[RMDB]
RNA sequence: GGGAACGACUCGAGUAGAGUCGAAAAUGGCAGGAACCCACUCAUUGGGGUCCGCUGUUCCAUUCUUUCUUACCUUGUGGCCGGCAUGGUCCCAGCCUCCUCGCUGGCGCCGGCUGGGCAACAUUCCAUACCCUCUCCUUCGGGAGAGGGAAAAGAAACAACAACAACAAC
Reactivity to 2A3 in 0.01 (KOAc 150mM, MgCl2 10mM, bicine 150mM(pH8.5), 24C), signal-to-noise 5, nucleotides 027 to 129: u000g010g000c020a020g030g030a060a070c000c030c000a040c080u280c060a240u080u210g010g000g000g010u020c010c030g030c060u010g000u080u040c030c000a050u080u040c050u090u120u050c070u080u100a200c130c000u040u060g080u110g100g020c010c030g000g000c040a120u200g010g040u050c010c000c010a010g000c000c010u140c000c030u120c150g030c000u030g000g000c020g010c030c010g020g010c000u030g000g000g010c010a040a020c000a100u090u030c070c000a020u040a200
Reactivity to DMS in 0.01 (KOAc 150mM, MgCl2 10mM, bicine 150mM(pH8.5), 24C), signal-to-noise 3, nucleotides 027 to 129: u000g000g080c040a050g010g000a000a000c000c000c000a020c260u130c300a250u100u060g000g070g000g040u000c090c000g020c080u010g010u020u070c060c030a080u060u010c100u070u030u000c080u030u040a100c000c000u020u000g020u030g050g060c000c000g000g060c040a130u060g020g100u020c300c020c000a030g010c000c060u040c150c150u020c200g070c070u030g010g020c040g020c000c000g020g040c010u030g050g010g050c000a120a050c110a080u040u050c000c000a120u160a250

Source: RMDB library 15KLIB, as collected in RNAgym. The record gives the reactivity of an RNA of 170 nucleotides to 2A3 and DMS. The 2A3 profile rests on 7,719 reads. For DMS, 8,099 sequencing reads were counted. The reactions ran in a buffer of 150 mM KOAc, 10 mM MgCl2 and 150 mM bicine (pH 8.5), at 24 C. As a SHAPE reagent, 2A3 marks flexible, mostly unpaired nucleotides at the ribose 2'-OH.